[RMDB]
RNA sequence: GGGAACGACUCGAGUAGAGUCGAAAAGGUAGCCACUUCGGUGGCUACCAAAGAGAUUGUACCUAUUGAGUUCCUGUGUAGGUACUCAUGACAGGAUGUCAAAAACAUGAUUCUUCGGAAUCAUGAAUCUCUAAUCGUGCUUCGGCACGAUUAGAGAAAAAGAAACAACAACAACAAC
Reactivity to DMS in 0.01 (KOAc 150mM, MgCl2 10mM, bicine 150mM(pH8.5), 24C), signal-to-noise 1, nucleotides 027 to 126: g000g010u000a000g010c000c000a010c000u010u010c190g020g000u000g000g000c000u000a000c000c000a020a070a070g000a140g000a070u000u000g040u000a040c010c000u000a030u000u000g000a090g010u000u000c000c000u000g000u000g000u000a010g000g000u000a010c000u000c120a120u000g030a030c110a120g000g010a160u000g010u000c010a020a080a120a040a180c010a000u000g000a020u000u000c000u000u010c300g040g000a020a010u010c000a000u000g030a050a050